[RMDB]
RNA sequence: GGGAACGACUCGAGUAGAGUCGAAAACGAACUGGCAAUAAGGCGGUGGGGAGUGCCCAGCGGCCGACAGGAGUAAUUCCCGCCGAAACAGGGUUUUCACCCUUCCUUUCUUCGGGUGUCCUUCCUCGAUAUUUUCCUUGUUCGCAAGGAAAAUAUCAAAAGAAACAACAACAACAAC
Reactivity to 2A3 in 0.01 (KOAc 150mM, MgCl2 10mM, bicine 150mM(pH8.5), 24C), signal-to-noise 2, nucleotides 027 to 126: c000g030a050a040c020u030g030g000c080a070a120u100a200a090g060g000c040g020g110u040g000g000g000g040a220g100u070g080c010c000c000a030g050c050g100g070c030c020g000a020c040a070g000g050a050g020u050a030a050u060u030c000c010c010g000c020c010g010a030a030a030c230a100g020g030g000u090u070u210u270c100a080c010c010c000u000u050c000c000u000u060u000c000u030u050c030g000g030g010u010g050u000c000c010u060u070c020c030u030c050
Reactivity to DMS in 0.01 (KOAc 150mM, MgCl2 10mM, bicine 150mM(pH8.5), 24C), signal-to-noise 2, nucleotides 027 to 126: c100g000a120a090c050u000g010g010c100a090a060u010a050a120g010g000c030g000g020u010g010g010g000g010a080g020u020g000c020c020c020a060g020c040g010g000c040c020g000a010c160a050g000g000a080g010u000a020a060u010u010c000c010c000g000c030c050g000a020a020a050c100a040g000g010g000u000u010u010u000c150a050c010c010c010u000u000c030c020u000u000u000c020u000u010c040g000g000g010u000g010u000c020c020u000u000c000c000u000c260
This 177-nucleotide RNA was probed chemically with 2A3 and DMS. For DMS, 2,190 sequencing reads were counted. The reactions ran in a buffer of 150 mM KOAc, 10 mM MgCl2 and 150 mM bicine (pH 8.5), at 24 C. Source: RMDB library VIROID, as collected in RNAgym. For 2A3 the reverse transcriptase was SuperScript II with manganese.